An RNA of 177 nucleotides, treated with DMS and 2A3 and read out base by base. 2A3 adducts were read by reverse transcription with SuperScript II with manganese. Conditions: 150 mM KOAc, 10 mM MgCl2 and 150 mM bicine (pH 8.5), 24 C. Source: RMDB library 15KREP, as collected in RNAgym.

[RMDB]
RNA sequence: GGGAACGACUCGAGUAGAGUCGAAAAAGAGCAUGUCUUACCAGGAGCAAGAUGAACUUUUUGCCAUGACAAAGCGUAACGUCAUUCCUACCAUGACUCAAAUGAAUCUAAAAUAUGCUAUUAGUGCCUAAGACUCGUACUUCGGUACGAGUCUUAGAAAAGAAACAACAACAACAAC
Reactivity to DMS in 0.01 (KOAc 150mM, MgCl2 10mM, bicine 150mM(pH8.5), 24C), signal-to-noise 1, nucleotides 027 to 126: a140g000a040g070c060a060u000g000u020c030u000u000a090c130c020a210g020g000a060g030c030a050a060g000a000u000g000a080a040c120u000u000u000u000u000g000c090c010a150u010g000a060c050a040a110a180g000c050g030u000a090a090c130g040u000c010a080u000u040c060c010u010a150c100c010a070u000g000a070c070u000c030a060a120a070u000g010a030a010u000c060u000a090a050a020a080u000a110u000g000c000u000a060u020u000a020g000u000g010c090
Reactivity to 2A3 in 0.01 (KOAc 150mM, MgCl2 10mM, bicine 150mM(pH8.5), 24C), signal-to-noise 1, nucleotides 027 to 126: a000g060a020g070c060a030u030g020u000c030u100u180a100c070c040a030g060g000a060g000c030a030a020g000a050u070g050a020a070c020u090u000u000u020u060g030c100c040a070u060g000a040c000a080a020a020g180c000g090u060a030a010c010g000u010c000a010u040u040c010c010u020a000c000c000a060u050g040a150c000u000c070a040a120a000u080g060a000a030u050c030u080a000a000a110a060u210a070u080g010c000u040a060u130u040a110g100u010g070c000